[RMDB]
An RNA of 177 nucleotides, treated with 2A3 and DMS and read out base by base. For 2A3, 7,799 sequencing reads were counted. Reactivities are given for positions 27 through 126. The RNA was probed in 150 mM KOAc, 10 mM MgCl2 and 150 mM bicine (pH 8.5) at 24 C.
RNA sequence: GGGAACGACUCGAGUAGAGUCGAAAAGACUCGCUUCGCCUGCUACCCCGUGUCGCACCCUCACGGUGCGUGGCGUUUCCUCUCGCCCCAAUUAUGCGCAGGCGCGCAUCACCGAAGUGUUACCGCCAACCGCCUAUUUAUUCGUAAAUAGGCGGUUAAAAGAAACAACAACAACAAC
Reactivity to 2A3 in 0.01 (KOAc 150mM, MgCl2 10mM, bicine 150mM(pH8.5), 24C), signal-to-noise 6, nucleotides 027 to 126: g010a010c010u000c010g010c020u080u050c020g020c010c010u020g010c010u070a080c000c000c000c020g040u060g040u060c040g020c020a050c000c030c000u130c050a060c080g040g000u030g010c030g010u010g020g010c020g010u000u040u030c020c010u040c010u030c020g030c010c000c000c010a060a090u200u060a050u170g050c050g010c030a030g120g000c020g000c010g000c040a030u040c030a020c020c020g040a060a020g010u020g020u090u060a050c010c020g020c020c000
Reactivity to DMS in 0.01 (KOAc 150mM, MgCl2 10mM, bicine 150mM(pH8.5), 24C), signal-to-noise 6, nucleotides 027 to 126: g000a050c020u000c020g010c050u000u000c090g010c050c010u020g000c050u000a110c040c030c020c040g020u000g010u020c030g010c040a050c010c020c060u040c120a140c120g010g000u000g000c060g030u010g000g010c040g010u000u010u010c020c010u000c060u000c060g010c040c020c030c050a080a090u030u010a060u000g000c040g020c020a100g000g010c080g000c160g000c060a060u000c080a060c050c030g000a110a090g010u000g000u010u010a070c030c030g010c140c130